RNA sequence: GGGAACGACUCGAGUAGAGUCGAAAAGCGUCCGGCGGUGAUCACCGUGCGCCGUACUGCCGUCUCGGUGUCGUAGCCUUCGGCGAUCUCUUCGCGGAACCGGCUCACGAUGAACAACCCGUAGUCGGAUCUAACGCGUCUUCGGACGCGUUAGAUCAAAAGAAACAACAACAACAAC
Reactivity to 2A3 in 0.01 (KOAc 150mM, MgCl2 10mM, bicine 150mM(pH8.5), 24C), signal-to-noise 3, nucleotides 027 to 126: g060c010g030u050c030c020g030g010c050g000g110u070g060a100u150c050a030c040c030g010u050g000c040g000c000c020g080u070a110c030u070g040c000c000g110u050c010u080c070g000g050u150g010u060c010g000u050a060g000c020c000u050u060c030g090g020c000g040a100u020c100u010c020u240u120c040g000c030g010g000a050a060c030c010g000g000c000u000c030a050c020g000a010u030g060a050a010c030a050a040c000c010c000g050u020a000g030u030c040g010
Reactivity to DMS in 0.01 (KOAc 150mM, MgCl2 10mM, bicine 150mM(pH8.5), 24C), signal-to-noise 1, nucleotides 027 to 126: g020c040g000u030c090c050g010g040c070g020g050u000g000a220u000c060a070c000c000g000u000g000c150g000c020c000g000u000a020c210u010g070c050c000g000u000c040u010c020g000g000u000g090u010c030g000u010a130g000c010c020u020u040c000g040g000c060g040a040u000c050u060c200u000u050c100g000c060g000g000a020a080c110c040g000g020c020u000c300a020c000g010a020u000g000a090a000c270a120a060c140c060c010g000u100a050g060u000c070g000